[RMDB]
RNA sequence: GGGAACGACUCGAGUAGAGUCGAAAAGCAGCAGUGAAUUAAAAUAAACAUGAAGAUCAAGAACAAGAUACAAACGGCAAGUAUCGUUCGAUCGAUGAGCCGAAUAAUAUCACAAAGAAGAAGAAAACGUAGUGUUGCAUUUCGAUGCAACACUACGAAAAGAAACAACAACAACAAC
Reactivity to DMS in 0.01 (KOAc 150mM, MgCl2 10mM, bicine 150mM(pH8.5), 24C), signal-to-noise 2, nucleotides 027 to 126: g000c040a010g060c040a040g030u010g010a040a070u030u020a010a090a120a090u020a110a040a060c060a100u020g000a060a070g010a070u000c050a050a100g010a060a050c110a040a010g020a020u000a030c130a090a050a120c070g040g000c060a060a270g050u010a000u000c000g050u000u020c220g030a030u010c000g000a050u020g020a180g000c060c010g010a050a030u000a090a110u000a070u000c000a050c110a040a030a080g020a080a080g000a060a100g020a130a020a040a190
Reactivity to 2A3 in 0.01 (KOAc 150mM, MgCl2 10mM, bicine 150mM(pH8.5), 24C), signal-to-noise 1, nucleotides 027 to 126: g000c010a020g000c020a020g040u000g110a070a020u130u020a080a040a040a190u160a010a060a000c030a070u020g110a030a030g020a010u030c070a110a040g050a060a060c050a000a080g020a040u050a020c020a050a210a000c000g060g010c030a130a080g000u020a000u010c020g000u070u090c010g040a170u030c000g000a030u050g000a010g000c000c030g060a000a030u160a050a030u070a000u070c090a020c020a060a200a000g140a070a000g010a050a030g120a000a110a000a000
An RNA of 177 nucleotides, treated with DMS and 2A3 and read out base by base.
DMS adducts were read by reverse transcription with MarathonRT.
Values cover nucleotides 27 to 126.